[RMDB]
RNA sequence: GGGAACGACUCGAGUAGAGUCGAAAACUGAUUCUUGAGUCCCAGUUUUGCAGAUGAGGUCACCGGGCUCAGGUGAGGCCAUAUUAUGCCUGGCUUCUUUGGGGUGCCUCUGGUUCCAGGCCCAGCAAUUCUACACACUCUUCGGAGUGUGUAGAAUAAAAGAAACAACAACAACAAC
Reactivity to 2A3 in 0.01 (KOAc 150mM, MgCl2 10mM, bicine 150mM(pH8.5), 24C), signal-to-noise 7, nucleotides 027 to 126: c010u030g010a110u110u110c020u030u080g030a030g060u060c000c000c010a010g010u040u050u090u110g060c080a060g010a180u080g020a080g000g050u130c040a020c020c020g050g030g000c020u040c090a020g010g060u060g020a030g020g000c000c020a060u090a130u300u140a090u240g070c030c020u010g020g020c000u050u020c010u080u140u140g080g010g000g010u030g020c000c000u010c000u010g010g020u100u000c040c030a050g020g010c010c000c000a020g050c020a010
Reactivity to DMS in 0.01 (KOAc 150mM, MgCl2 10mM, bicine 150mM(pH8.5), 24C), signal-to-noise 5, nucleotides 027 to 126: c030u000g000a170u010u030c020u010u000g010a080g010u000c010c020c010a050g000u010u010u020u010g020c070a080g030a100u000g010a060g000g000u020c020a050c040c040g010g000g010c010u010c040a030g010g030u020g020a030g000g020c010c040a030u040a120u020u070a100u050g000c150c070u000g010g000c020u020u010c020u000u040u030g030g020g010g010u000g020c010c020u000c020u010g010g000u010u000c020c050a090g000g000c000c000c030a120g010c200a130